[RMDB]
RNA sequence: GGGAACGACUCGAGUAGAGUCGAAAACUCGAUGUGAAAGUGCUGGUGCUGCCCGACGAUUCGAUGAUCGACCAUCGCCUCCAAGUGUUGACUACCGACACCUCGGUGCGGUUGUAUCCGGAGAACGCACACGAACGUGUUUCGACACGUUCGUGUGAAAAGAAACAACAACAACAAC
Reactivity to DMS in 0.01 (KOAc 150mM, MgCl2 10mM, bicine 150mM(pH8.5), 24C), signal-to-noise 3, nucleotides 027 to 126: c030u010c020g030a130u020g020u000g020a050a090a060g010u020g000c020u000g000g050u000g020c040u010g000c020c020c010g000a110c100g010a160u020u000c080g000a140u000g010a090u000c030g000a060c060c040a060u010c060g000c050c020u000c030c050a080a120g010u000g000u000u000g000a180c090u000a060c080c010g010a080c070a020c030c020u010c170g020g020u000g010c130g000g000u000u010g020u000a050u000c050c050g000g000a110g020a080a110c190g010
Reactivity to 2A3 in 0.01 (KOAc 150mM, MgCl2 10mM, bicine 150mM(pH8.5), 24C), signal-to-noise 1, nucleotides 027 to 126: c000u020c020g120a160u160g030u020g080a110a040a050g080u030g010c020u070g100g020u080g000c000u030g000c000c070c000g010a020c020g020a100u100u040c030g030a050u070g020a060u070c040g050a070c000c040a060u060c070g080c030c010u040c010c020a110a040g010u020g040u150u140g070a040c040u070a060c020c000g050a060c030a030c010c000u050c150g080g020u010g000c000g000g020u020u000g020u000a020u000c070c040g040g000a070g000a080a080c050g000